[RMDB]
RNA sequence: GGGAACGACUCGAGUAGAGUCGAAAAACGCAUUCAAUGAUUUGAGCGUUGCAUAACGCCCCCAUUUUGAACGCCUUGAUAGAAAAAUCAUCUCUAAUGGCUAAAAUUUGCGCUUUCACGCUCUCUACUGGUUAAGGAAAUUCGUUUCCUUAACCAGAAAAGAAACAACAACAACAAC
Reactivity to 2A3 in 0.01 (KOAc 150mM, MgCl2 10mM, bicine 150mM(pH8.5), 24C), signal-to-noise 5, nucleotides 027 to 126: a000c010g000c030a060u110u080c050a030a140u150g100a150u170u080u110g000a030g000c000g010u020u050g010c100a110u100a280a040c070g040c000c020c040c010c010a040u070u070u030u090g020a060a020c030g010c000c010u050u050g050a050u070a120g120a060a150a030a020a070u080c040a070u000c010u010c010u080a090a040u040g020g000c000u020a010a050a030a070u050u080u070g030c030g020c010u030u110u050c050a020c040g020c000u010c000u030c010u060a090
Reactivity to DMS in 0.01 (KOAc 150mM, MgCl2 10mM, bicine 150mM(pH8.5), 24C), signal-to-noise 6, nucleotides 027 to 126: a060c040g010c040a070u010u010c070a050a070u010g010a150u010u010u000g000a060g010c010g010u010u000g020c200a080u010a040a040c070g010c010c020c020c100c050a130u000u000u000u000g000a090a110c230g000c020c010u000u000g010a100u000a070g000a020a080a100a120a070u010c130a050u000c080u000c060u010a060a070u000g000g000c020u010a050a060a040a080u000u010u000g020c030g010c050u000u000u000c070a080c100g010c060u000c010u000c040u000a230

Structure probing data (2A3 and DMS) for a 177-nucleotide construct. The data come from the RNA Mapping Database (RMDB), library OK2TST. Conditions: 150 mM KOAc, 10 mM MgCl2 and 150 mM bicine (pH 8.5), 24 C. Reactivities are given for positions 27 through 126.